Source: RMDB library 15KREP, as collected in RNAgym. Structure probing data (2A3 and DMS) for a 177-nucleotide construct. 2A3 adducts were read by reverse transcription with SuperScript II with manganese. The reactions ran in a buffer of 150 mM KOAc, 10 mM MgCl2 and 150 mM bicine (pH 8.5), at 24 C. For DMS the reverse transcriptase was MarathonRT.
[RMDB]
RNA sequence: GGGAACGACUCGAGUAGAGUCGAAAAAUGUCACUUGUAUUAGUCAUUGUAGUGAAGAGAUUGUACAACCCAUCACUUUCUAACUUUGCGUUAGCAUUGUGCAGUGGUGUAAUGUGGUUGUACACUUAGGAGGAUUAGAGUUCGCUCUAAUCCUCCUAAAAGAAACAACAACAACAAC
Reactivity to 2A3 in 0.01 (KOAc 150mM, MgCl2 10mM, bicine 150mM(pH8.5), 24C), signal-to-noise 1, nucleotides 027 to 126: a020u100g030u020c020a040c020u000u050g060u080a150u070u180a130g070u060c030a050u020u170g100u170a020g020u000g020a040a010g100a060g030a070u000u140g010u000a000c000a010a000c030c010c010a000u020c000a000c000u020u300u170c010u020a020a010c000u000u010u000g000c020g130u100u190a050g010c010a020u000u080g000u070g000c000a010g050u020g040g000u010g020u020a050a080u070g060u150g000g050u000u000g000u010a000c000a000c000u000u000
Reactivity to DMS in 0.01 (KOAc 150mM, MgCl2 10mM, bicine 150mM(pH8.5), 24C), signal-to-noise 1, nucleotides 027 to 126: a090u010g000u000c030a070c030u000u010g000u010a050u000u000a140g010u000c090a100u000u000g010u000a040g020u000g010a070a090g010a080g010a080u010u000g010u000a000c010a000a010c000c000c000a030u000c010a010c000u000u000u010c060u000a140a050c000u010u000u000g010c000g000u000u000a110g030c010a000u000u000g020u010g000c230a030g020u000g000g030u000g000u000a040a040u010g010u040g000g000u000u000g000u030a000c000a000c170u010u000